[RMDB]
RNA sequence: GGGAACGACUCGAGUAGAGUCGAAAAGUAGAAGAUCAUACAGACACCGUCACAUACACUAGUGAUAGCAUUAAUACAGUAAGUGCAUCAUCUGGAGAAUCCACAACAGACGAGACUCCGGAACCAAUUACUUAUAAAGAAGAUCAUACAGUCACAGCUCCUGAAUGCGAUUCGUCGCAUUCAGGAGAAAAGAAACAACAACAACAAC
Reactivity to 2A3 in 0.01 (KOAc 150mM, MgCl2 10mM, bicine 150mM(pH8.5), 24C), signal-to-noise 1, nucleotides 027 to 156: g010u030a000g050a200a050g000a070u000c020a000u200a130c050a000g180a050c010a000c060c050g060u060c000a030c000a030u300a050c040a020c150u090a010g020u000g090a080u050a040g000c000a000u080u230a100a010u120a080c030a010g090u020a050a000g000u000g020c000a020u030c000a010u000c030u000g020g000a000g020a020a000u000c000c000a010c020a120a240c030a100g250a090c000g000a060g010a000c000u000c000c000g000g010a020a140c030c000a130a050u280u000a000c010u090u080a110u180a170a090a020g000a000a000g010a050u050c000a000u010a070c090a020g100u090c030a000c100a090g080
Description: Source: RMDB library OK3TST, as collected in RNAgym. The record gives the reactivity of an RNA of 207 nucleotides to 2A3. Reactivities are given for positions 27 through 156. The RNA was probed in 150 mM KOAc, 10 mM MgCl2 and 150 mM bicine (pH 8.5) at 24 C. 2A3 is a SHAPE reagent: it acylates the 2'-hydroxyl of flexible nucleotides of all four kinds.